RNA sequence: GGGAACGACUCGAGUAGAGUCGAAAAGUCACUUAGAAGGUCGUCGCAAGAUUGGCAAUUUAGGUGAAAAACGGACAAAACCAACUCCGGAUCAAUAUGCUGAGAUCGUCCACAACUUUCGAGUUGGCAUAUGUAGUCCUUUCGAGGACUACAUAUGAAAAGAAACAACAACAACAAC
Reactivity to DMS in 0.01 (KOAc 150mM, MgCl2 10mM, bicine 150mM(pH8.5), 24C), signal-to-noise 9, nucleotides 027 to 126: g000u000c000a000c010u000u000a010g010a010a030g020g030u000c000g010u000c000g000c300a100a120g000a020u000u030g040g010c000a020a040u000u000u000a010g000g010u000g000a020a050a060a100a100c140g010g000a040c080a070a060a090a160c050c030a040a050c070u000c020c090g000g000a040u000c050a070a110u020a060u020g010c110u010g010a160g010a040u000c040g010u000c010c020a110c120a040a050c090u000u000u010c090g000a010g010u000u000g000g000
Reactivity to 2A3 in 0.01 (KOAc 150mM, MgCl2 10mM, bicine 150mM(pH8.5), 24C), signal-to-noise 9, nucleotides 027 to 126: g050u000c000a000c010u010u010a010g020a040a010g070g000u010c000g000u000c010g010c050a040a050g000a070u260u300g080g000c000a020a030u010u020u020a020g020g000u010g040a100a020a010a010a010c060g030g020a020c040a030a090a020a040c020c010a010a030c010u010c040c050g040g000a020u040c020a050a080u130a080u300g120c090u070g040a050g010a120u030c020g020u030c020c020a080c030a120a110c050u080u170u110c070g010a010g010u010u000g010g010